Structure probing data (DMS and 2A3) for a 177-nucleotide construct. The reactions ran in a buffer of 150 mM KOAc, 10 mM MgCl2 and 150 mM bicine (pH 8.5), at 24 C. For 2A3 the reverse transcriptase was SuperScript II with manganese. The DMS profile rests on 2,293 reads. DMS adducts were read by reverse transcription with MarathonRT. Source: RMDB library TTRDEL, as collected in RNAgym. The 2A3 profile rests on 4,804 reads.

RNA sequence: GGGAACGACUCGAGUAGAGUCGAAAAGAUAUGGACAGUACGAGUCGCAAUCGGAAACGAUUGUACGACGAUGAGUACGUCCUAAGUCAAACAUUCUGAGCACUGGUUCGCCAGUGCUCAGAAUGAACCUCACACGUUAGUUCGCUAACGUGUGAGGAAAAGAAACAACAACAACAAC
Reactivity to DMS in 0.01 (KOAc 150mM, MgCl2 10mM, bicine 150mM(pH8.5), 24C), signal-to-noise 3, nucleotides 027 to 126: g010a040u000a300u010g010g000a020c010a100g000u000a020c010g000a250g010u000c000g000c010a020a000u000c000g030g000a110a120a170c000g000a010u000u000g020u000a130c110g010a020c020g030a100u030g010a300g010u000a010c010g020u000c000c010u000a010a110g000u010c030a160a110a250c000a010u000u000c000u010g000a010g020c000a000c000u000g020g000u000u000c250g040c010c000a000g020u000g000c000u000c000a000g010a000a000u000g000a050a070
Reactivity to 2A3 in 0.01 (KOAc 150mM, MgCl2 10mM, bicine 150mM(pH8.5), 24C), signal-to-noise 2, nucleotides 027 to 126: g010a000u080a010u180g000g020a020c130a190g000u000a000c020g020a040g040u010c010g020c000a020a010u000c000g020g000a050a120a000c030g030a000u020u030g040u130a130c130g040a020c020g030a140u250g080a060g020u010a000c010g000u030c010c000u020a150a020g070u030c010a000a080a080c010a030u010u000c000u030g010a000g000c000a010c000u030g000g090u110u220c300g090c100c000a000g010u000g000c010u000c000a000g000a000a000u000g000a000a000